[RMDB]
RNA sequence: GGGAACGACUCGAGUAGAGUCGAAAAGGGGAAGGAUCUCGAGGAAGACAUCUCCCAAGAAGAAGCGGGAACAAUCUCAAGAAGAGGAGGAUUCCCCGAGACGCUGACGGAAACCCCGGGAACAAGGUACGAUGGGCGUUCGCGCCCAUCAAAAGAAACAACAACAACAAC
Reactivity to DMS in 0.01 (KOAc 150mM, MgCl2 10mM, bicine 150mM(pH8.5), 24C), signal-to-noise 3, nucleotides 027 to 129: g050g030g020g030a070a020g050g000a000u030c000u000c050g010a040g000g000a000a000g000a130c180a110u050c080u010c070c200c040a040a070g050a090a050g010a070a060g000c220g040g010g030a090a100c200a200a050u020c080u000c030a060a070g010a150a090g010a030g010g000a030g020g040a060u040u050c040c000c080c000g030a090g030a070c070g000c030u000g040a070c100g000g000a020a120a210c060c010c000c070g050g000g000a050a060c040a000a100g010g020u020a070c210
Reactivity to 2A3 in 0.01 (KOAc 150mM, MgCl2 10mM, bicine 150mM(pH8.5), 24C), signal-to-noise 2, nucleotides 027 to 129: g030g010g000g000a080a010g050g020a020u030c000u020c060g000a060g020g020a030a030g050a040c020a070u020c040u000c020c010c010a040a000g100a020a000g020a080a000g050c080g010g000g000a030a020c050a050a140u030c000u030c110a080a040g090a010a000g030a060g050g000a000g000g000a040u070u100c000c000c000c000g050a010g000a000c010g000c060u030g000a000c010g000g000a000a000a030c010c010c000c010g000g000g000a060a000c050a020a020g080g000u100a020c050